[RMDB]
RNA sequence: GGGAACGACUCGAGUAGAGUCGAAAAAUUCAACAAUUACAAUAUUCUCUAGUCCCGACGCUGCACAAACUCCAGUUAGAUAUUUAGCCUUAAAGGACAAUAAGAACCUUAUUAUGGCAAGCCCUAACAGUAAUCCGAUGUUCGCAUCGGAUUACUGAAAAGAAACAACAACAACAAC
Reactivity to 2A3 in 0.01 (KOAc 150mM, MgCl2 10mM, bicine 150mM(pH8.5), 24C), signal-to-noise 3, nucleotides 027 to 126: a000u110u100c070a060a050c040a100a060u200u140a090c090a100a030u050a130u220u000c050u060c070u060a010g010u000c050c000c030g020a020c010g000c000u010g060c020a010c040a180a090a020c050u000c010c000a010g000u010u040a000g060a080u090a050u160u200u190a070g000c000c000u020u000a040a010a030g040g000a020c050a030a050u130a050a110g100a080a130c000c000u110u000a140u050u030a070u190g000g000c030a050a000g000c040c000c000u060a090a030
Reactivity to DMS in 0.01 (KOAc 150mM, MgCl2 10mM, bicine 150mM(pH8.5), 24C), signal-to-noise 1, nucleotides 027 to 126: a200u000u010c110a080a120c000a200a010u090u070a070c130a090a120u110a080u000u000c010u020c000u000a030g000u000c000c000c000g000a080c150g000c030u000g000c000a070c140a100a100a050c100u000c040c030a080g090u000u000a000g030a150u000a220u000u000u010a190g000c000c000u010u020a030a060a000g020g040a000c060a010a090u070a070a100g030a100a030c020c000u000u000a020u030u040a000u000g000g090c020a070a110g000c090c000c030u040a040a210